[RMDB]
RNA sequence: GGGAACGACUCGAGUAGAGUCGAAAACCUGCAUCACGGCAUUAAGCGCCAGCAACGUUAUGUGGCAGAAGCCAUUACUGAAGAGUGGCGUAUGGCACCCGGUCCGCUUGAAGUGGCCUGGUUUGCGAUGUGGUUAGUAAUUCGUUACUAACCACAUAAAAGAAACAACAACAACAAC
Reactivity to 2A3 in 0.01 (KOAc 150mM, MgCl2 10mM, bicine 150mM(pH8.5), 24C), signal-to-noise 9, nucleotides 027 to 126: c000c000u000g010c000a040u070c040a020c060g050g010c030a030u090u140a150a040g020c020g000c030c020a030g060c020a020a060c030g020u100u100a080u210g030u020g050g000c030a030g090a280a020g020c000c000a030u040u080a080c090u120g110a130a070g060a070g150u020g010g000c010g010u060a100u070g050g000c010a010c000c010c010g010g020u090c040c010g040c070u090u160g100a170a040g060u070g060g000c000c000u020g040g010u030u090u090g020c020g010
Reactivity to DMS in 0.01 (KOAc 150mM, MgCl2 10mM, bicine 150mM(pH8.5), 24C), signal-to-noise 9, nucleotides 027 to 126: c010c000u010g020c070a060u020c090a090c120g000g010c030a070u010u010a100a130g010c040g000c040c020a090g010c080a090a160c120g010u000u010a050u030g020u000g000g000c000a100g010a120a200g010c000c010a020u000u010a050c090u020g010a140a150g010a070g010u010g000g000c010g020u000a080u010g000g000c010a060c170c030c030g000g000u020c020c020g010c050u000u020g010a090a100g040u010g000g000c020c000u010g000g000u010u000u010g010c040g010
This 177-nucleotide RNA was probed chemically with 2A3 and DMS.